[RMDB]
RNA sequence: GGGAACGACUCGAGUAGAGUCGAAAAUCAAGGCUGGUUUAGUCGGUGUGCUCACACUAGACAACCAGGACCUUAAUGGCAAGUGGUAUGAUUUUGGUGACUUCGUAAUCACUCAACCUGGUUCAGGCUAUAAGCACGUCUUCGGACGUGCUUAUAGAAAAGAAACAACAACAACAAC
Reactivity to DMS in 0.01 (KOAc 150mM, MgCl2 10mM, bicine 150mM(pH8.5), 24C), signal-to-noise 2, nucleotides 027 to 126: u010c050a090a020g010g020c000u000g000g000u010u000u000a090g020u010c010g010g000u000g010u000g020c300u000c230a090c000a000c000u010a100g020a010c010a040a020c000c000a000g010g000a130c000c000u000u010a110a060u000g010g030c140a060a060g000u010g020g030u000a030u010g000a100u010u010u000u000g020g000u000g000a090c070u010u000c110g030u000a090a110u000c030a020c010u000c100a050a080c020c020u000g010g070u010u000c070a080g010g020
Reactivity to 2A3 in 0.01 (KOAc 150mM, MgCl2 10mM, bicine 150mM(pH8.5), 24C), signal-to-noise 1, nucleotides 027 to 126: u070c040a000a010g040g000c010u010g000g040u060u090u150a040g000u020c000g000g000u000g010u010g070c040u060c110a030c000a010c020u030a130g000a010c000a010a000c010c000a030g030g000a020c000c000u070u090a030a150u040g060g040c060a060a000g020u020g090g010u050a030u100g030a050u000u130u050u070g040g010u060g070a050c030u000u070c060g040u010a060a070u060c020a000c030u100c030a000a070c010c010u050g000g080u060u090c010a020g090g060
An RNA of 177 nucleotides, treated with DMS and 2A3 and read out base by base. The DMS profile rests on 1,389 reads. Source: RMDB library 15KREP, as collected in RNAgym. For DMS the reverse transcriptase was MarathonRT. 2A3 adducts were read by reverse transcription with SuperScript II with manganese.